[RMDB]
RNA sequence: GGGAACGACUCGAGUAGAGUCGAAAAGGGGUCGAUACCUCGAGCGUUAUUGGGACUUGGAUUUAUGAGGCUGAAGCCUCCACGGCCUCAUUGUCAGUCCAGGACGCUCACGCGAGGUAUCGACGGAGGCACCCAAAUGGCGGAUUCGUCCGCCAAAGAUAUCUACGUACUUCGGUACGUAGAUAUCAAAAGAAACAACAACAACAAC
Reactivity to DMS in 0.01 (KOAc 150mM, MgCl2 10mM, bicine 150mM(pH8.5), 24C), signal-to-noise 1, nucleotides 027 to 156: g000g000g040g030u000c000g040a030u000a020c010c000u010c000g000a040g010c010g030u000u010a060u010u010g020g030g010a220c050u000u020g030g010a060u000u000u000a050u010g010a030g010g020c000u000g000a090a090g050c020c010u000c000c000a300c000g020g000c010c010u010c000a010u010u000g020u000c060a110g010u000c010c000a130g040g010a120c080g010c080u010c050a050c150g000c060g000a030g030g020u000a000u000c020g010a000c000g000g010a050g040g020c010a140c020c000c020a100a080a160u000g010g010c000g050g000a090u000u000c300g010u000c000c000g000c010c000a060a020a180
Reactivity to 2A3 in 0.01 (KOAc 150mM, MgCl2 10mM, bicine 150mM(pH8.5), 24C), signal-to-noise 5, nucleotides 027 to 156: g110g010g040g010u010c000g000a000u000a000c000c000u010c020g020a080g000c010g030u050u140a270u300u300g110g010g020a050c100u110u260g090g020a080u260u280u100a020u080g010a000g000g000c010u020g020a100a020g020c000c000u010c000c000a020c010g000g000c000c000u000c000a000u000u020g010u030c110a090g050u000c000c010a010g050g000a010c030g020c090u080c120a030c100g090c050g000a000g000g000u000a000u000c010g000a000c010g000g000a000g000g000c010a030c000c010c000a020a100a100u110g000g000c000g000g010a010u040u090c200g070u020c080c000g000c000c000a010a000a000